Structure probing data (DMS and 2A3) for a 177-nucleotide construct. The reactions ran in a buffer of 150 mM KOAc, 10 mM MgCl2 and 150 mM bicine (pH 8.5), at 24 C.
RNA sequence: GGGAACGACUCGAGUAGAGUCGAAAACAUCCGUACGCCGCUUCUCCCCUCUCCUCACGGUUGGGGGCUGGAGUGGUGGGGGGCGUGCGUGAAAUUGCCGCCCUUUGGAUCACUUUUCUGUGCGGGGCCAUUCUAACUAUUUCGAUAGUUAGAAUGGAAAAGAAACAACAACAACAAC
Reactivity to DMS in 0.01 (KOAc 150mM, MgCl2 10mM, bicine 150mM(pH8.5), 24C), signal-to-noise 7, nucleotides 027 to 126: c100a090u010c010c010g010u010a030c010g020c000c000g000c010u000u000c000u000c050c010c000c010u000c030u010c000c000u000c250a130c300g000g010u010u020g000g000g000g000g010c140u000g010g010a010g030u000g000g040u000g000g000g000g000g000g010c000g010u040g020c000g010u010g020a030a120a150u030u020g020c010c010g000c000c000c010u000u000u010g000g010a030u010c280a080c110u010u010u000u010c020u000g020u000g010c020g000g000g010g010
Reactivity to 2A3 in 0.01 (KOAc 150mM, MgCl2 10mM, bicine 150mM(pH8.5), 24C), signal-to-noise 9, nucleotides 027 to 126: c030a050u030c000c000g010u010a010c000g000c000c000g010c000u020u000c000u020c000c000c000c000u010c010u010c010c000u190c030a060c090g030g000u030u020g030g000g000g000g000c050u030g000g010a000g000u010g000g000u020g000g000g000g000g000g000c040g070u300g030c020g010u130g100a090a090a080u170u180g000c000c000g000c000c000c000u000u010u010g020g000a020u040c030a110c190u170u150u080u020c020u020g010u010g000c000g000g000g020g000